[RMDB]
RNA sequence: GGGAACGACUCGAGUAGAGUCGAAAACCUUCGAUUGCCAGAGGGGCACCGAAGAUGUCACCGACGUAAUGAGAGAAAUAUGACCAGUUAGUCCCGAAUUGGAACUCCAUAGUCAGACCAGUGGCAAGGUAGUUUCUUUUUUCGAAAAGAAACUACCAAAAGAAACAACAACAACAAC
Reactivity to 2A3 in 0.01 (KOAc 150mM, MgCl2 10mM, bicine 150mM(pH8.5), 24C), signal-to-noise 3, nucleotides 027 to 126: c000c000u030u060c040g050a070u030u100g020c020c000a080g050a110g260g130g030g020c020a020c010c020g060a040a040g060a070u080g020u000c000a020c100c060g030a050c030g030u040a100a040u070g030a070g010a010g100a210a090a040u280a130u110g100a080c030c010a010g000u050u040a030g020u030c020c020c020g020a020a040u030u030g000g040a020a040c000u000c010c010a030u050a060g040u030c020a010g030a120c020c010a050g060u070g030g000c000a020a040
Reactivity to DMS in 0.01 (KOAc 150mM, MgCl2 10mM, bicine 150mM(pH8.5), 24C), signal-to-noise 3, nucleotides 027 to 126: c040c000u000u010c030g030a100u010u010g010c020c030a190g010a120g000g010g010g020c030a030c120c040g010a030a070g010a140u020g000u010c030a060c080c040g020a090c100g020u000a090a060u010g000a110g010a070g010a070a040a100u010a070u010g010a150c030c020a060g010u000u010a080g010u000c000c000c010g010a040a060u000u000g000g010a110a110c020u000c030c030a040u010a090g010u000c050a050g010a120c070c070a080g020u000g020g020c060a040a130

The record gives the reactivity of an RNA of 177 nucleotides to 2A3 and DMS. Source: RMDB library OK2TST, as collected in RNAgym. Reactivities are given for positions 27 through 126.